[RMDB]
RNA sequence: GGGAACGACUCGAGUAGAGUCGAAAAGCUUCGUGUACGACUUCCAGGGUGUCUACGGCGACGAAUACGGCCGUGCGUAUCUCGUCCACGACAAUGGUGUGACGGAGCCAGACCGGAUAGCUGACCGCGUGAUAUGGGAGUUCGCUCCCAUAUCACGAAAAGAAACAACAACAACAAC
Reactivity to 2A3 in 0.01 (KOAc 150mM, MgCl2 10mM, bicine 150mM(pH8.5), 24C), signal-to-noise 5, nucleotides 027 to 126: g030c010u030u030c000g020u030g050u110a090c070g060a050c110u180u070c030c000a060g120g070g070u120g020u000c020u040a030c070g050g010c040g010a020c050g020a070a060u050a040c030g050g000c060c040g040u020g010c010g000u000a040u030c110u020c010g010u000c010c010a040c030g060a000c030a030a120u150g030g000u030g030u060g040a010c040g010g000a010g000c010c000a030g040a040c030c000g040g040a120u090a070g030c040u040g060a070c000c020g010
Reactivity to DMS in 0.01 (KOAc 150mM, MgCl2 10mM, bicine 150mM(pH8.5), 24C), signal-to-noise 3, nucleotides 027 to 126: g000c010u000u000c070g080u010g000u030a070c120g000a100c100u000u040c070c020a100g010g020g020u000g010u020c000u000a110c210g000g030c030g000a060c170g000a060a050u020a020c060g000g050c040c030g010u040g000c010g000u000a010u000c040u030c020g000u020c000c000a140c230g050a080c140a080a120u020g050g000u010g000u020g000a080c020g010g020a110g000c030c010a050g030a130c020c000g020g000a040u020a050g030c040u010g000a110c010c030g000